Notes
This 177-nucleotide RNA was probed chemically with 2A3 and DMS. The RNA was probed in 150 mM KOAc, 10 mM MgCl2 and 150 mM bicine (pH 8.5) at 24 C. Source: RMDB library TTRDES, as collected in RNAgym. 2A3 adducts were read by reverse transcription with SuperScript II with manganese.
RNA sequence: GGGAACGACUCGAGUAGAGUCGAAAAAAAGAUAUGGAUCGUAGAAUCCGUAUUCAGGCUUGGAUUUAUAGCGUCGGAAACGACGCUAUUGUCAGCCUGAUACGGAUUAUACGAUCCUAAGUCAAAACAUAUCGUAAUGGUUCGCCAUUACGAUAUGAAAAGAAACAACAACAACAAC
Reactivity to 2A3 in 0.01 (KOAc 150mM, MgCl2 10mM, bicine 150mM(pH8.5), 24C), signal-to-noise 5, nucleotides 027 to 126: a000a000a000g060a010u080a040u130g000g010a000u010c000g000u000a010g020a030a010u000c000c000g020u000a070u150u280c010a000g000g010c030u230u300g230g010a080u300u300u050a010u070a000g010c000g000u000c010g020g040a060a060a050c000g010a010c000g000c000u000a000u000u010g010u000c000a000g000c000c000u010g010a000u000a000c000g000g000a000u010u000a000u000a000c000g000a000u010c000c000u000a010a000g010u010c020a000a000a080a150
Reactivity to DMS in 0.01 (KOAc 150mM, MgCl2 10mM, bicine 150mM(pH8.5), 24C), signal-to-noise 5, nucleotides 027 to 126: a080a070a070g000a030u000a300u000g010g000a010u000c000g020u000a000g000a030a010u000c000c000g010u000a010u010u000c000a010g000g010c000u010u010g030g010a010u000u000u000a000u000a000g020c010g030u000c000g000g010a110a100a230c000g020a010c000g010c000u000a000u000u000g000u000c000a050g000c000c000u000g010a020u000a000c000g000g000a010u000u000a020u000a010c010g000a000u000c000c000u000a010a060g000u010c030a110a080a130a190